[RMDB]
RNA sequence: GGGAACGACUCGAGUAGAGUCGAAAAAAGACUAAUCGAACCAUCUGGUAGCUGGUUCCUGCCGAAGUUUCCCUCAGGAUAGCAGUAACGUUUUCAGUUUUAUGAGGUAAAGCGAAUGAUUAGAGGCAAUACCCACAAAUUUCGAUUUGUGGGUAUUAAAAGAAACAACAACAACAAC
Reactivity to DMS in 0.01 (KOAc 150mM, MgCl2 10mM, bicine 150mM(pH8.5), 24C), signal-to-noise 9, nucleotides 027 to 126: a060a050g010a140c050u010a050a040u010c050g000a060a050c040c020a040u010c050u010g020g020u020a090g020c100u000g000g010u000u010c010c020u000g010c040c030g010a100a100g020u010u010u000c020c000c010u000c090a070g000g000a100u020a070g010c020a030g010u010a110a140c070g010u010u010u000u010c050a090g000u010u010u020u030a080u020g000a090g000g010u010a030a050a050g010c020g010a050a080u010g010a030u000u010a040g000a120g010g010c110
Reactivity to 2A3 in 0.01 (KOAc 150mM, MgCl2 10mM, bicine 150mM(pH8.5), 24C), signal-to-noise 8, nucleotides 027 to 126: a000a010g080a020c060u060a040a020u040c030g020a020a010c000c010a040u050c040u070g160g080u140a030g010c030u010g050g000u030u000c010c000u020g000c020c010g060a080a020g010u000u030u030c000c010c000u020c030a020g070g020a110u110a050g050c020a010g030u050a050a030c030g010u010u010u060u070c050a070g010u010u020u070u200a140u150g090a060g050g060u110a040a040a000g010c020g020a030a030u060g030a030u040u040a030g010a030g040g040c010
The record gives the reactivity of an RNA of 177 nucleotides to DMS and 2A3. The RNA was probed in 150 mM KOAc, 10 mM MgCl2 and 150 mM bicine (pH 8.5) at 24 C. The data come from the RNA Mapping Database (RMDB), libraries RFM100 and RFMREP.